The record gives the reactivity of an RNA of 177 nucleotides to 2A3 and DMS. The RNA was probed in 150 mM KOAc, 10 mM MgCl2 and 150 mM bicine (pH 8.5) at 24 C. In probing experiments dimethyl sulfate is read out at A N1 and C N3, which are open when not base-paired. For DMS the reverse transcriptase was MarathonRT. Reactivities are given for positions 27 through 126.
[RMDB]
RNA sequence: GGGAACGACUCGAGUAGAGUCGAAAAGAUAUGGAGUUGUAGACAUGAAGGAAGGGUCGGAAACGACCCGUAACUUCAACAGCUACACCUCCUAAGUCAGAAACUCUAUUGCUUCGGCAAUAGAGAACUAAGUAGAUAGGUUCGCCUAUCUACUUAGAAAAGAAACAACAACAACAAC
Reactivity to 2A3 in 0.01 (KOAc 150mM, MgCl2 10mM, bicine 150mM(pH8.5), 24C), signal-to-noise 5, nucleotides 027 to 126: g030a020u050a040u150g010g010a010g000u020u010g000u010a020g030a120c100a230u190g010a020a000g040g000a050a140g000g000g000u000c010g030g000a090a070a020c010g000a000c000c000c000g000u010a010a010c000u000u000c010a020a010c060a020g020c000u010a000c000a000c010c000u000c000c010u020a150a010g060u030c030a010g190a180a170a100c000u010c000u000a000u000u000g000c000u060u080c300g150g000c000a000a000u000a000g010a000g000a010a000
Reactivity to DMS in 0.01 (KOAc 150mM, MgCl2 10mM, bicine 150mM(pH8.5), 24C), signal-to-noise 9, nucleotides 027 to 126: g010a040u000a300u010g000g010a010g010u000u000g010u000a010g000a040c070a250u000g010a010a010g000g010a160a210g010g000g020u000c000g010g000a100a080a210c010g010a010c000c000c000g000u000a050a240c000u000u000c000a010a060c290a110g000c000u000a000c000a010c040c000u000c000c000u000a020a080g010u000c030a110g010a130a130a100c010u000c000u000a000u000u000g000c000u000u010c250g020g000c000a000a000u000a010g000a010g010a050a100